[RMDB]
RNA sequence: GGGAACGACUCGAGUAGAGUCGAAAAACACCGGACUAGGCGUACGCGCCUAGUCCGGUGAGGGUCAGACGAGCAGACACCCAUUGAAGUUCUGCUCUACCGUUAAAAGGAAGUAAACCAUCAGGAAAGAAGUGCGCUUGGUUCGCCAAGCGCACAACAUCUAUCACUAGUUCGCUAGUGAUAGAUGAAAAGAAACAACAACAACAAC
Reactivity to 2A3 in 0.01 (KOAc 150mM, MgCl2 10mM, bicine 150mM(pH8.5), 24C), signal-to-noise 1, nucleotides 027 to 156: a010c010a000c010c000g030g000a010c000u010a040g010g050c030g060u040a080c230g010c000g050c030c000u020a000g020u000c000c020g000g050u020g000a010g010g000g000u010c030a070g010a270c030g010a050g040c020a000g000a000c030a010c030c040c070a040u000u260g020a000a000g010u040u000c000u000g010c000u040c000u000a000c010c010g030u070u070a070a130a110a080g100g080a120a090g050u180a110a020a090c040c030a060u070c080a040g110g070a110a070a140g080a150a030g040u010g000c010g000c000u010u000g000g000u030u050c080g010c040c000a000a000g000c000g000c010a000c000a000a000